[RMDB]
RNA sequence: GGGAACGACUCGAGUAGAGUCGAAAAACGUACCAUAGCUAGUCGUACGUACGAUCGGAUCGCGAGCUAGCUAGGCUAGCAUCUGUGCGUACCAUGGGAUCCGUACGCUAGUGCUAGUACUGGAUCACAACCCAUUCAAAUUCGUUUGAAUGGGUUGAAAAGAAACAACAACAACAAC
Reactivity to 2A3 in 0.01 (KOAc 150mM, MgCl2 10mM, bicine 150mM(pH8.5), 24C), signal-to-noise 9, nucleotides 027 to 126: a000c050g030u030a020c010c010a100u090a030g010c010u000a000g040u190c030g020u030a050c020g040u040a080c080g070a100u130c070g050g020a040u060c030g010c010g020a020g040c010u010a000g000c010u030a050g110g040c000u000a000g010c020a110u090c060u120g220u110g040c010g010u040a080c010c030a160u180g130g010g060a060u050c050c030g000u000a000c000g000c010u010a010g020u010g060c010u010a000g000u010a090c050u100g080g030a060u090c030a010
Reactivity to DMS in 0.01 (KOAc 150mM, MgCl2 10mM, bicine 150mM(pH8.5), 24C), signal-to-noise 9, nucleotides 027 to 126: a080c130g010u010a080c020c050a160u010a150g010c010u000a020g010u000c050g020u000a050c060g010u010a100c110g010a100u010c100g020g010a290u000c060g010c030g000a110g000c000u000a030g000c030u010a070g020g010c000u000a010g000c000a040u010c070u010g010u010g010c010g010u000a110c010c080a140u000g020g010g010a080u010c110c090g000u000a000c000g010c010u000a020g020u000g000c090u010a030g010u000a050c080u000g010g000a130u010c090a170
This 177-nucleotide RNA was probed chemically with 2A3 and DMS. It was measured as part of the RMDB library OK2TRN. 2A3 adducts were read by reverse transcription with SuperScript II with manganese. Conditions: 150 mM KOAc, 10 mM MgCl2 and 150 mM bicine (pH 8.5), 24 C.